[RMDB]
RNA sequence: GGGAACGACUCGAGUAGAGUCGAAAAGCCUUCCUCACCAUCGUGAUCAUCCUGGGGUGGGCCCUUACCUUCUUCCUCAGGCGAUCGGUCCUCGAGCCGGUGAAGAAGAUCGGCGAGGUGUGCGCCGCCGGCACUUCUAAUUCGUUAGAAGUGCCGGAAAAGAAACAACAACAACAAC
Reactivity to DMS in 0.01 (KOAc 150mM, MgCl2 10mM, bicine 150mM(pH8.5), 24C), signal-to-noise 2, nucleotides 027 to 126: g020c060c000u000u000c010c010u000c010a020c010c030a100u000c050g020u010g020a030u000c020a130u010c010c000u010g000g010g000g060u020g010g030g020c110c040c050u010u020a060c140c040u000u010c090u000u000c000c030u010c020a030g020g020c300g000a040u000c050g010g010u000c100c050u010c050g000a080g000c170c120g000g030u000g020a040a040g000a040a040g000a080u010c020g000g010c000g000a090g020g000u000g020u010g030c000g010c000c020g010
Reactivity to 2A3 in 0.01 (KOAc 150mM, MgCl2 10mM, bicine 150mM(pH8.5), 24C), signal-to-noise 1, nucleotides 027 to 126: g010c030c000u030u030c000c010u050c010a000c010c020a090u050c010g060u090g030a020u010c020a040u000c010c010u010g000g000g010g000u030g000g000g000c000c060c000u090u170a100c010c000u020u150c030u090u050c020c010u000c020a000g020g020c050g100a090u060c070g000g000u140c040c060u090c030g030a050g100c130c070g030g000u050g010a020a020g070a020a000g020a090u090c020g030g010c010g010a040g000g130u120g030u040g030c020g010c000c010g000